[RMDB]
Background
Conditions: 150 mM KOAc, 10 mM MgCl2 and 150 mM bicine (pH 8.5), 24 C. The record gives the reactivity of an RNA of 177 nucleotides to DMS and 2A3. Source: RMDB library OK2TRN, as collected in RNAgym.
RNA sequence: GGGAACGACUCGAGUAGAGUCGAAAAGUGAGUGUCACUCACAGUCACUGUGUCAGUGUGAGACUCUCAGAGACAGUGUGAGUGUGACAGUGAGUGACUGUGUGUGUCUCAGAGACUGUGACUGUGACCAUGUCGGGUUUUUCGAAACCCGACAUGGAAAAGAAACAACAACAACAAC
Reactivity to DMS in 0.01 (KOAc 150mM, MgCl2 10mM, bicine 150mM(pH8.5), 24C), signal-to-noise 2, nucleotides 027 to 126: g010u000g000a080g010u010g020u020c010a020c010u000c010a000c000a040g000u000c000a010c010u010g030u000g040u010c010a070g020u000g030u010g010a170g000a100c010u010c010u000c010a090g000a230g010a090c230a120g000u010g000u010g000a050g010u000g020u000g020a010c000a020g010u000g000a030g020u000g000a010c010u000g010u000g030u000g000u000g000u010c000u000c000a060g000a080g010a080c050u010g010u010g000a120c040u000g010u000g010a300
Reactivity to 2A3 in 0.01 (KOAc 150mM, MgCl2 10mM, bicine 150mM(pH8.5), 24C), signal-to-noise 1, nucleotides 027 to 126: g060u040g010a040g030u120g080u150c010a000c020u030c010a000c010a000g000u000c000a000c000u070g010u060g070u160c020a070g020u000g100u120g230a220g040a030c000u030c010u000c070a040g040a050g040a190c090a200g020u030g010u010g090a000g020u050g040u060g080a020c020a020g060u020g170a030g000u000g030a000c010u000g000u000g000u010g000u020g010u000c000u000c020a000g050a000g030a090c030u030g040u060g110a010c000u020g030u050g180a050
Notes: Values are in units of 0.01, from 0 to 300, in steps of 10. For 2A3, 1,217 sequencing reads were counted. High 2A3 reactivity points to a flexible backbone, as in loops and unpaired stretches.